Conditions: 150 mM KOAc, 10 mM MgCl2 and 150 mM bicine (pH 8.5), 24 C.
An RNA of 207 nucleotides, treated with 2A3 and read out base by base.
It was measured as part of the RMDB library ARCHII.
Values are in units of 0.01, from 0 to 300, in steps of 10.
[RMDB]
RNA sequence: GGGAACGACUCGAGUAGAGUCGAAAAUUCCAAGUCGGGAGUUGAGGGUUCGGGCUCGAGCGAAGGCUUGUGGUUCGGGCAUUCUUAGAGCGGAGGAGACUGCGUGAGGCUGGUUUCACAGAGCAGCGUCCACCUCCCGCUUUCGACGGUGGAAGGAGUUUGAGUAUCAGUUCGCUGAUACUCAAACAAAAGAAACAACAACAACAAC
Reactivity to 2A3 in 0.01 (KOAc 150mM, MgCl2 10mM, bicine 150mM(pH8.5), 24C), signal-to-noise 1, nucleotides 027 to 156: u000u000c000c000a010a000g010u010c020g020g000g000a020g010u090u080g030a030g010g000g000u010u000c000g000g030g050c000u010c010g000a000g020c050g070a100a060g210g000c000u020u020g060u130g060g000u030u020c010g020g000g010c030a020u120u060c030u020u140a110g020a030g060c170g010g000a030g020g000a020g000a010c090u130g010c060g140u140g010a030g080g050c030u050g000g100u000u300u260c130a130c030a030g020a020g130c010a000g020c000g010u020c020c090a220c040c010u020c000c000c000g020c000u010u010u000c010g000a000c030g080g060u010g020g010a020a020g020g020a030
Reactivities are given for positions 27 through 156.